Source information: The record gives the reactivity of an RNA of 207 nucleotides to 2A3 and DMS. The 2A3 profile rests on 1,720 reads. DMS adducts were read by reverse transcription with MarathonRT. High DMS reactivity at an A or C suggests that its Watson-Crick edge is free.
RNA sequence: GGGAACGACUCGAGUAGAGUCGAAAAAGGGCAGGGUGAAAUUCCCGAUCGGCGGUAAAGUCCGCGAGCCGAACGAAAAAGGUUUGGCAGGAACCGGUGAGAUUCCGGUACCGACAGUAUAGUCUAGAUGACCACUUCAGCUUCGGCUGAAGUGGAACCACAUAAAUGACUUCGGUCAUUUAUGUGGAAAAGAAACAACAACAACAAC
Reactivity to 2A3 in 0.01 (KOAc 150mM, MgCl2 10mM, bicine 150mM(pH8.5), 24C), signal-to-noise 1, nucleotides 027 to 156: a000g060g010g050c090a060g020g000g000u000g000a010a030a010u010u000c010c000c010g000a040u030c020g020g010c010g000g030u000a010a000a000g000u000c000c000g000c000g010a010g000c000c000g010a010a000c020g110a090a110a020a030a020g070g000u000u000u000g020g000c020a000g020g010a000a000c000c000g000g000u000g000a010g000a000u000u000c000c000g000g000u000a000c010c000g000a000c000a000g010u000a030u030a040g020u000c020u020a100g010a230u110g070a050c010c000a000c000u000u000c000a000g000c010u040u140c230g130g000c000u010g000a000a000g000u000g000g000a000a010
Reactivity to DMS in 0.01 (KOAc 150mM, MgCl2 10mM, bicine 150mM(pH8.5), 24C), signal-to-noise 1, nucleotides 027 to 156: a080g000g030g070c000a070g010g050g060u000g000a100a160a260u000u000c000c000c010g010a090u000c000g030g000c000g000g000u010a110a130a100g010u000c000c010g030c020g020a300g000c020c000g000a010a110c010g010a030a190a120a210a090g000g020u000u000u000g010g050c010a040g000g010a030a020c010c010g050g000u000g000a230g030a300u000u010c010c000g010g010u000a030c000c000g000a070c070a090g000u000a170u000a110g000u000c010u000a110g040a180u000g030a230c010c010a010c000u000u010c000a000g000c050u000u000c300g070g020c010u000g030a000a010g030u000g000g030a000a020